[RMDB]
RNA sequence: GGGAACGACUCGAGUAGAGUCGAAAACUGUUGAUUUACGGGUCAGUAGCACUGGUUCGCAAGGAGGCAUUUCUAUGGUUUCUUAGAGUUAUUAGGCUGACGCUCGUGGAGGAUAUGGCCUCACAGGCCUAGGCUUUGGAUUCGUCCAAAGCCUAGGAAAAGAAACAACAACAACAAC
Reactivity to DMS in 0.01 (KOAc 150mM, MgCl2 10mM, bicine 150mM(pH8.5), 24C), signal-to-noise 6, nucleotides 027 to 126: c060u000g000u010u010g000a150u030u000u010a040c060g010g000g020u010c040a050g010u020a080g010c030a300c030u000g000g000u010u000c030g000c120a060a060g000g010a080g000g010c020a030u000u010u020c050u030a050u000g010g000u010u000u000c010u000u000a080g000a080g020u000u000a050u010u030a080g000g000c030u000g010a110c130g000c020u000c030g010u010g000g000a040g000g010a110u030a040u020g010g000c010c010u000c060a080c160a070g010g000
Reactivity to 2A3 in 0.01 (KOAc 150mM, MgCl2 10mM, bicine 150mM(pH8.5), 24C), signal-to-noise 9, nucleotides 027 to 126: c040u020g030u040u040g090a260u040u050u090a040c030g000g010g030u020c030a040g020u070a010g060c050a040c070u030g020g040u050u030c030g040c080a040a020g050g010a010g030g020c030a040u040u170u000c080u150a130u110g260g020u030u030u010c010u020u090a040g000a020g100u090u080a110u100u130a090g050g000c010u030g030a030c020g000c020u020c030g050u050g040g040a050g010g000a020u040a060u190g070g020c000c010u020c020a090c050a030g030g050